[RMDB]
RNA sequence: GGGAACGACUCGAGUAGAGUCGAAAAGAUAUGGACUUUCUUUUGACGCUCGGGAUGUCGGAAACGACAUCACGAGCGAUAAGAAAGGUCCUAAGUCAAAAGUUCGCACGGUUCGCCGUGCGAACAACACUCCUACUUACUUCGGUAAGUAGGAGUGAAAAGAAACAACAACAACAAC
Reactivity to DMS in 0.01 (KOAc 150mM, MgCl2 10mM, bicine 150mM(pH8.5), 24C), signal-to-noise 2, nucleotides 027 to 126: g010a050u010a300u010g000g000a190c010u000u000u000c010u000u000u000u000g010a200c110g020c000u000c000g010g000g010a010u000g010u000c000g000g000a130a060a180c000g000a020c000a010u000c000a020c000g010a010g010c010g000a010u000a010a020g000a020a010a010g000g020u000c000c010u010a030a160g000u000c010a090a180a170a120g000u000u000c000g010c000a020c000g010g000u000u030c260g030c020c000g000u010g000c000g000a000a000c000a110a160
Reactivity to 2A3 in 0.01 (KOAc 150mM, MgCl2 10mM, bicine 150mM(pH8.5), 24C), signal-to-noise 1, nucleotides 027 to 126: g030a030u120a080u260g010g000a010c000u000u050u000c010u000u190u040u130g270a160c080g000c020u010c000g060g020g000a030u030g000u020c010g020g020a010a110a110c010g000a000c000a020u010c010a020c000g000a010g000c020g000a000u010a000a010g000a000a020a010g140g010u020c010c000u020a120a020g050u040c020a040a060a030a300g000u010u000c000g000c020a000c000g000g080u090u130c260g010c220c000g000u010g010c000g000a010a000c000a020a000
Annotation:
This 177-nucleotide RNA was probed chemically with DMS and 2A3. The DMS profile rests on 1,794 reads. For DMS the reverse transcriptase was MarathonRT. The reactions ran in a buffer of 150 mM KOAc, 10 mM MgCl2 and 150 mM bicine (pH 8.5), at 24 C.